Chemical mapping of a 177-nucleotide RNA with DMS.

[RMDB]
RNA sequence: GGGAACGACUCGAGUAGAGUCGAAAAGACUCUAGUACGAGAGGACCGAGUUGGACGUACCUCUAGUGUAUCAGUUGUGCCGCUAGGUGCAUUGCUGAGUAGCUACGUGCGGUCGAGAUAAGCGCUGCCAACUCGUACACUUCGGUGUACGAGUUGGAAAAGAAACAACAACAACAAC
Reactivity to DMS in 0.01 (KOAc 150mM, MgCl2 10mM, bicine 150mM(pH8.5), 24C), signal-to-noise 1, nucleotides 027 to 126: g000a010c010u000c010u010a080g010u030a060c000g000a040g010a300g000g000a160c020c030g000a130g000u000u000g010g000a050c000g030u000a010c030c010u000c050u000a000g010u000g010u000a270u000c000a010g000u000u000g020u010g000c010c000g000c290u000a060g010g000u000g030c010a010u020u000g000c000u000g000a040g000u000a300g000c000u000a000c180g010u010g000c000g000g000u000c040g010a160g010a140u030a030a170g020c170g010c040u010g020
Source: RMDB library RFMREP, as collected in RNAgym.